Structure probing data (DMS and 2A3) for a 170-nucleotide construct. The data come from the RNA Mapping Database (RMDB), library 15KLIB. The reactions ran in a buffer of 150 mM KOAc, 10 mM MgCl2 and 150 mM bicine (pH 8.5), at 24 C. For 2A3 the reverse transcriptase was SuperScript II with manganese.

RNA sequence: GGGAACGACUCGAGUAGAGUCGAAAAGCGUCCUCCUUACGGAUGCCCAGGUCGGACCGCGAGGAGGUGGAGAUCCCAUGCCGACCCGAAGAGGAAAGGAGGACACGGACGACAAACCGUGAGUUCUAGAGAACUGCGUUCGCGCAGUUCAAAAGAAACAACAACAACAAC
Reactivity to DMS in 0.01 (KOAc 150mM, MgCl2 10mM, bicine 150mM(pH8.5), 24C), signal-to-noise 7, nucleotides 027 to 129: g020c100g020u000c000c020u030c040c020u000u000a040c140g010g000a130u060g030c050c050c060a140g000g040u040c060g030g040a080c080c060g020c070g030a070g010g040a070g010g070u060g010g020a160g050a070u040c050c050c040a110u050g060c060c000g010a040c040c020c090g000a170a000g010a070g020g020a020a030a030g000g000a040g020g020a090c050a030c060g010g020a160c000g020a070c060a070a200a030c040c040g020u030g020a200g030u030u020c040u080a050g040a300
Reactivity to 2A3 in 0.01 (KOAc 150mM, MgCl2 10mM, bicine 150mM(pH8.5), 24C), signal-to-noise 5, nucleotides 027 to 129: g040c020g010u040c000c000u030c000c010u080u080a060c080g150g050a100u100g060c010c000c000a030g030g040u040c020g040g020a140c030c020g040c040g050a090g050g030a000g000g040u070g030g020a100g010a070u060c010c010c010a010u030g010c000c010g000a030c000c000c010g090a120a100g030a050g050g030a040a020a000g020g000a010g000g010a000c010a000c010g000g030a010c020g000a020c030a010a130a030c040c000g000u020g040a060g020u010u010c010u040a050g000a000